[RMDB]
RNA sequence: GGGAACGACUCGAGUAGAGUCGAAAACCGUCCCGAGGCGGCGAUCCGUCCGAAUGCGCGCCCCGCGAUGAUUCGCGGCGGUGCUCCGGUAGUUCGAGGAGCCCCGCCUGUGAUCGUCCGGGGCAUUGUUCCAUGGAUAUUUCGAUAUCCAUGGAACAAAAGAAACAACAACAACAAC
Reactivity to DMS in 0.01 (KOAc 150mM, MgCl2 10mM, bicine 150mM(pH8.5), 24C), signal-to-noise 1, nucleotides 027 to 126: c070c160g000u020c000c050c000g010a260g000g000c020g080g080c300g040a100u070c000c000g000u060c000c020g010a060a010u100g000c140g100c190g040c000c000c000c000g020c230g010a000u000g000a050u000u030c000g020c050g010g000c000g000g000u000g010c000u000c000c040g000g000u100a090g020u050u090c300g000a240g000g000a000g000c000c000c000c000g000c040c000u060g050u000g010a050u000c000g010u000c000c020g000g000g020g000c020a000u030u000
Reactivity to 2A3 in 0.01 (KOAc 150mM, MgCl2 10mM, bicine 150mM(pH8.5), 24C), signal-to-noise 5, nucleotides 027 to 126: c010c010g070u070c020c030c010g010a170g000g030c030g000g030c100g070a070u110c010c000g040u000c010c010g060a090a100u300g100c070g010c020g000c000c000c000c020g010c140g000a000u010g000a000u040u220c020g010c010g000g000c020g000g000u000g010c000u000c000c010g080g050u160a130g170u220u260c120g080a100g010g000a000g000c000c010c000c000g000c000c020u060g010u010g000a000u000c000g010u010c000c000g000g000g000g000c000a000u000u000